[RMDB]
RNA sequence: GGGAACGACUCGAGUAGAGUCGAAAAAGGAACAGGAAAGACACAAACUGAGUACACUCUGGGUAGCUGCGUCUUGGGGUUAUGUGUCUUAAGGGGAGUGGAAGCUUGCCCUGUGCCCUGAGGAAGGUCCAUUACCUUCCUUCGGGAAGGUAAUGGAAAAAGAAACAACAACAACAAC
Reactivity to DMS in 0.01 (KOAc 150mM, MgCl2 10mM, bicine 150mM(pH8.5), 24C), signal-to-noise 3, nucleotides 027 to 126: a080g020g010a140a130c040a060g010g010a140a060a030g000a020c010a010c020a030a070a110c050u010g020a060g010u000a090c090a050c030u010c070u010g020g030g020u010a040g000c080u000g000c060g010u000c020u010u020g000g000g000g010u010u020a080u000g030u000g010u000c010u000u000a050a030g010g010g000g000a040g010u000g010g030a100a070g010c030u000u000g000c010c000c010u000g000u000g010c060c010c010u020g010a070g000g000a130a080g010g000
Reactivity to 2A3 in 0.01 (KOAc 150mM, MgCl2 10mM, bicine 150mM(pH8.5), 24C), signal-to-noise 2, nucleotides 027 to 126: a000g100g000a080a000c010a010g000g130a090a030a020g030a030c000a000c020a050a120a030c060u060g020a010g090u060a030c030a010c040u070c090u150g120g010g090u120a050g050c110u070g070c030g100u110c010u030u080g000g020g000g030u100u080a070u220g000u010g010u000c000u010u020a100a040g010g000g000g010a030g000u070g070g020a080a000g060c000u040u180g230c000c020c010u010g010u070g020c030c030c030u030g010a020g050g090a080a030g060g020
Chemical mapping of a 177-nucleotide RNA with DMS and 2A3. The reactions ran in a buffer of 150 mM KOAc, 10 mM MgCl2 and 150 mM bicine (pH 8.5), at 24 C. For 2A3 the reverse transcriptase was SuperScript II with manganese. The data come from the RNA Mapping Database (RMDB), library OK2TRN. For DMS the reverse transcriptase was MarathonRT. Values cover nucleotides 27 to 126.